[RMDB]
RNA sequence: GGGAACGACUCGAGUAGAGUCGAAAAACUAUUCUUAUUUGAUGCCUGUGCUCUCAAUGACCGAUUGUCUGGCCGCUGAGACACAUAGGGAUUGUGAUUUUAAUAAACCACUCAUUGAGUGGCCACUACCGUGGUAAGUUCGCUUACCACAAAAGAAACAACAACAACAAC
Reactivity to DMS in 0.01 (KOAc 150mM, MgCl2 10mM, bicine 150mM(pH8.5), 24C), signal-to-noise 9, nucleotides 027 to 129: a130c100u000a000u010u020c010u020u020a070u030u040u040g020a010u010g000c000c030u000g030u030g020c300u010c020u000c000a030a040u000g020a080c010c000g020a100u080u060g020u070c110u030g010g010c060c010g000c070u000g020a030g030a040c140a060c000a000u050a000g000g000g000a000u000u000g000u030g040a050u010u000u010u010a070a080u030a060a070a120c020c000a000c000u030c020a150u040u070g010a020g020u000g000g000c000c030a050c090u050a090c160c100
Reactivity to 2A3 in 0.01 (KOAc 150mM, MgCl2 10mM, bicine 150mM(pH8.5), 24C), signal-to-noise 9, nucleotides 027 to 129: a000c070u070a070u150u050c060u140u130a200u180u130u240g080a040u080g110c000c020u010g000u010g010c050u000c000u000c010a020a040u050g010a040c000c010g140a140u120u230g180u180c150u160g020g000c000c010g020c020u010g000a000g000a000c000a000c010a030u090a020g010g000g010a020u040u060g070u040g090a100u010u060u080u140a130a120u120a060a070a030c000c000a010c000u000c040a300u080u180g000a000g010u000g000g030c000c000a100c030u130a070c020c080